[RMDB]
RNA sequence: GGGAACGACUCGAGUAGAGUCGAAAAUGACCCACAGUCGGGUGAUCCACCAGGAGGGUGGAGGAGAGACCACCUCCAGAGGACCCCUUCAGCGAACAGAAGAGCUCCCUCCUCCGGAGAGAGAAGAAGAGUGCACGAUUCGUCGUGCACAAAAGAAACAACAACAACAAC
Reactivity to DMS in 0.01 (KOAc 150mM, MgCl2 10mM, bicine 150mM(pH8.5), 24C), signal-to-noise 7, nucleotides 027 to 129: u080g030a130c030c030c000a140c180a090g000u010c000g000g000g000u020g000a070u020c040c030a140c050c050a120g030g020a030g010g000g070u040g020g020a010g000g020a160g020a200g030a110c000c000a070c020c010u000c050c040a070g020a010g020g010a070c120c040c030c030u020u020c090a080g060c080g010a060a000c060a140g060a100a060g020a100g030c050u030c030c010c040u020c050c020u000c080c040g030g020a040g020a020g010a090g040a070a040g010a090a030g040a100
Reactivity to 2A3 in 0.01 (KOAc 150mM, MgCl2 10mM, bicine 150mM(pH8.5), 24C), signal-to-noise 5, nucleotides 027 to 129: u090g040a030c000c030c000a040c020a050g100u100c050g020g000g000u030g030a230u000c020c010a040c010c030a050g000g040a020g060g160g030u070g000g020a020g070g020a140g000a010g020a030c000c010a000c000c000u040c020c000a030g050a040g030g010a020c000c000c000c000u020u060c030a030g030c010g040a040a030c020a060g090a080a020g020a080g030c010u020c010c010c000u040c000c000u060c030c010g010g000a030g010a000g000a000g010a050a010g020a030a000g070a020
An RNA of 170 nucleotides, treated with DMS and 2A3 and read out base by base.
The RNA was probed in 150 mM KOAc, 10 mM MgCl2 and 150 mM bicine (pH 8.5) at 24 C.
It was measured as part of the RMDB library 15KLIB.
Reactivities are given for positions 27 through 129.
DMS adducts were read by reverse transcription with MarathonRT.
The 2A3 profile rests on 14,504 reads.
For DMS, 17,764 sequencing reads were counted.